Conditions: 150 mM KOAc, 10 mM MgCl2 and 150 mM bicine (pH 8.5), 24 C. Chemical mapping of a 207-nucleotide RNA with DMS and 2A3. 2A3 adducts were read by reverse transcription with SuperScript II with manganese.
RNA sequence: GGGAACGACUCGAGUAGAGUCGAAAAGUAUGGAUGCCACCGUGACCGCUCAAUCACACAAGUGCCAACGAUAACGAGGCGCUCGCUAUUGCUGCGUAACUGACGGCCUGACGGUCUGACGUUACAAAAAACGAAAAGUGGUUCGCCACUUUUCGAACCUCUCCAAUUAGUUCGCUAAUUGGAGAGGAAAAGAAACAACAACAACAAC
Reactivity to DMS in 0.01 (KOAc 150mM, MgCl2 10mM, bicine 150mM(pH8.5), 24C), signal-to-noise 2, nucleotides 027 to 156: g000u010a090u000g000g040a090u020g030c030c000a070c050c020g070u020g010a010c030c040g010c010u000c020a110a110u020c040a120c050a070c080a040a090g030u030g050c030c030a090a130c080g020a070u000a020a090c020g010a150g010g010c010g060c040u020c000g000c030u000a090u000u000g000c000u000g010c060g050u010a070a030c000u020g000a300c300g020g000c040c010u000g040a160c160g040g000u010c000u000g040a250c240g000u000u040a090c020a010a020a010a080a100a160c050g000a060a000a000a000g000u000g030g020u010u010c280g020c030c000a010c010u000u000u010u000c010g010a050a070
Reactivity to 2A3 in 0.01 (KOAc 150mM, MgCl2 10mM, bicine 150mM(pH8.5), 24C), signal-to-noise 5, nucleotides 027 to 156: g090u070a070u140g040g030a030u080g040c020c010a030c030c030g040u030g020a040c020c020g010c040u050c040a050a100u090c010a040c010a010c020a130a040g030u000g060c030c000a080a060c110g080a110u130a190a060c070g020a110g050g020c020g020c020u040c010g020c030u070a080u180u220g030c060u040g020c030g020u000a020a000c000u010g020a010c000g010g000c000c030u140g070a080c130g010g010u000c000u000g020a020c020g010u020u020a010c000a010a050a000a010a010a000c000g000a000a000a000a000g000u000g040g000u040u030c110g060c010c000a000c000u000u000u010u000c000g000a010a000